RNA sequence: GGGAACGACUCGAGUAGAGUCGAAAAAGUCGAGAUUGCCGGCUUCAAAGGCUUUAUCGUUGAUUACGUGUGCUAUAACAACGCCAUAGGUAUCAUUCUUCGUCUUCUUAGGCGCGGAACAUCUAAAAUCAAUCGACAGUUUCGACUGUCGAUUGAUAAAAGAAACAACAACAACAAC
Reactivity to DMS in 0.01 (KOAc 150mM, MgCl2 10mM, bicine 150mM(pH8.5), 24C), signal-to-noise 2, nucleotides 027 to 126: a110g050u000c030g000a030g000a050u000u000g020c030c000g010g020c130u000u000c140a070a150a150g010g000c020u000u000u050a030u020c020g000u020u040g000a090u000u000a030c090g000u010g000u010g000c010u010a120u020a090a070c170a150a100c150g050c030c020a080u010a020g000g020u010a060u060c100a140u000u000c060u030u000c090g000u000c040u030u100c140u030u030a000g000g020c000g020c030g000g000a030a010c180a050u000c050u000a030a100a060
Reactivity to 2A3 in 0.01 (KOAc 150mM, MgCl2 10mM, bicine 150mM(pH8.5), 24C), signal-to-noise 2, nucleotides 027 to 126: a000g040u000c030g000a010g000a120u040u060g070c010c000g020g030c000u130u060c060a150a100a010g000g000c000u040u110u110a100u040c030g010u010u070g010a060u040u090a040c050g030u070g050u120g030c030u050a020u040a220a160c060a050a010c030g030c000c010a030u080a080g060g050u040a020u020c040a000u050u000c000u030u040c000g010u000c010u220u010c030u110u260a000g000g000c000g000c030g000g000a010a030c000a060u050c050u120a050a040a040
An RNA of 177 nucleotides, treated with DMS and 2A3 and read out base by base. Conditions: 150 mM KOAc, 10 mM MgCl2 and 150 mM bicine (pH 8.5), 24 C. Values cover nucleotides 27 to 126.